[RMDB]
RNA sequence: GGGAACGACUCGAGUAGAGUCGAAAACGUCUGGAAGGGCUCGUUCACCACAUUGAGCACAUUUUGCUGCAGGGUGUGCAGUGGCGAGGUGCUCGCGGGAGCAUUGAAUCCGUCUAGACCGAGCAGCUAGGCAAAUAAUUUUCGAAUUAUUUGCCUAAAAAGAAACAACAACAACAAC
Reactivity to DMS in 0.01 (KOAc 150mM, MgCl2 10mM, bicine 150mM(pH8.5), 24C), signal-to-noise 9, nucleotides 027 to 126: c220g000u000c010u000g000g010a030a040g000g010g010c170u010c090g010u000u000c030a090c010c040a050c070a200u010u000g010a200g010c000a010c010a050u010u000u000u010g010c020u000g010c010a210g010g000g010u000g020u000g010c030a110g020u000g000g000c040g010a050g010g010u000g010c000u000c010g000c300g010g000g000a020g010c020a070u000u000g010a070a090u010c010c000g000u000c010u000a020g000a030c010c100g000a120g010c040a050g010c100
Reactivity to 2A3 in 0.01 (KOAc 150mM, MgCl2 10mM, bicine 150mM(pH8.5), 24C), signal-to-noise 6, nucleotides 027 to 126: c010g000u000c000u010g010g030a030a000g040g010g010c040u030c060g050u130u180c050a070c100c010a040c020a090u110u240g070a020g040c000a010c010a030u050u090u110u270g020c030u010g000c010a040g080g030g060u080g030u020g040c040a030g010u010g010g000c030g060a050g010g000u010g000c000u020c020g100c110g100g170g000a030g000c010a000u040u140g050a030a020u070c000c000g010u000c010u010a000g010a020c020c040g030a030g040c010a000g000c020

Notes:
This 177-nucleotide RNA was probed chemically with DMS and 2A3. For 2A3, 12,429 sequencing reads were counted. 2A3 adducts were read by reverse transcription with SuperScript II with manganese. The DMS profile rests on 23,470 reads.